RNA sequence: GGGAACGACUCGAGUAGAGUCGAAAAACAUGCUGGCCAACCCAACCCCACGAUCCUCCAUCGGCAUGAUCAUGAUGUGUUCUCAAAUAUCAGGCCAGUAAAUCACCAUGCUCGUGAUGGUAAAGGCAACUUAUGCCCAAGUUCGCUUGGGCAUAAAUCGUACACAACAGUUCGCUGUUGUGUACGAAAAAGAAACAACAACAACAAC
Reactivity to 2A3 in 0.01 (KOAc 150mM, MgCl2 10mM, bicine 150mM(pH8.5), 24C), signal-to-noise 2, nucleotides 027 to 156: a000c010a000u020g010c010u000g050g010c020c000a060a020c140c050c070a010a070c010c010c010c040a100c030g050a100u120c000c050u040c010c000a010u020c020g020g000c030a000u030g000a030u110c040a020u070g110a040u070g060u010g010u070u000c010u010c040a070a070a020u250a100u160c060a020g020g010c010c000a000g000u010a010a050a030u000c000a000c050c000a000u060g000c010u080c070g150u150g000a000u000g000g060u040a120a020a010g030g010c000a020a020c010u010u020a010u000g000c000c000c000a010a000g000u050u100c080g050c080u000u000g030g000g000c000a010u000a000a000a000
Reactivity to DMS in 0.01 (KOAc 150mM, MgCl2 10mM, bicine 150mM(pH8.5), 24C), signal-to-noise 1, nucleotides 027 to 156: a030c080a100u000g020c000u000g010g000c020c030a190a190c080c030c050a120a120c020c010c020c010a110c120g000a150u000c020c040u000c010c010a090u010c030g020g000c050a050u010g010a080u010c040a090u000g030a050u000g010u010g020u000u000c040u000c040a090a080a120u010a050u000c070a080g010g000c020c000a080g000u000a010a070a080u000c060a060c040c000a020u000g020c070u000c100g030u000g010a010u000g000g060u000a050a040a050g030g000c070a090a140c020u000u000a000u000g050c010c010c000a000a050g020u000u000c300g070c000u000u040g000g000g000c020a000u000a000a000a080
This 207-nucleotide RNA was probed chemically with 2A3 and DMS. The 2A3 profile rests on 1,177 reads. The RNA was probed in 150 mM KOAc, 10 mM MgCl2 and 150 mM bicine (pH 8.5) at 24 C. For DMS the reverse transcriptase was MarathonRT. In probing experiments dimethyl sulfate is read out at A N1 and C N3, which are open when not base-paired. 2A3 adducts were read by reverse transcription with SuperScript II with manganese.